Conditions: 150 mM KOAc, 10 mM MgCl2 and 150 mM bicine (pH 8.5), 24 C. This 177-nucleotide RNA was probed chemically with DMS and 2A3. Reactivities are rounded to 0.1 and cut off at 0 and 3. For DMS, 1,102 sequencing reads were counted. Reactivities are given for positions 27 through 126.
[RMDB]
RNA sequence: GGGAACGACUCGAGUAGAGUCGAAAAGAUAUGGAUCCCAUGUUUUCGCAACAGCUCGGAAACGAGACAUGCGGGACAUAAGGGAUCCUAAGUCAAACUAUUAUGAAACUUCGGUUUCAUAAUAGAACCUACCGAUAGUGUUCGCACUAUCGGUAGGAAAAGAAACAACAACAACAAC
Reactivity to DMS in 0.01 (KOAc 150mM, MgCl2 10mM, bicine 150mM(pH8.5), 24C), signal-to-noise 2, nucleotides 027 to 126: g010a030u000a300u040g010g000a000u000c000c000c000a110u000g000u000u000u020u030c020g020c000a020a120c210a300g000c010u010c010g010g000a100a140a150c000g000a000g030a040c050a220u000g000c000g000g000g020a000c020a030u000a050a090g000g000g030a000u000c000c020u000a030a080g010u000c000a140a150a210c000u000a000u000u000a000u000g000a040a000a010c000u000u000c270g040g020u000u000u000c000a000u030a000a000u000a000g020a040a160
Reactivity to 2A3 in 0.01 (KOAc 150mM, MgCl2 10mM, bicine 150mM(pH8.5), 24C), signal-to-noise 2, nucleotides 027 to 126: g010a030u080a060u130g020g010a000u000c000c010c000a000u010g070u000u050u010u250c000g000c010a080a140c060a250g000c010u000c010g030g010a110a130a100c020g010a000g010a030c060a050u070g000c000g000g000g020a000c000a000u190a180a280g000g020g010a010u000c010c000u010a040a000g040u030c040a080a040a110c000u000a000u020u010a010u020g010a020a000a000c010u070u090c280g110g000u020u000u000c000a000u000a000a000u000a020g000a020a060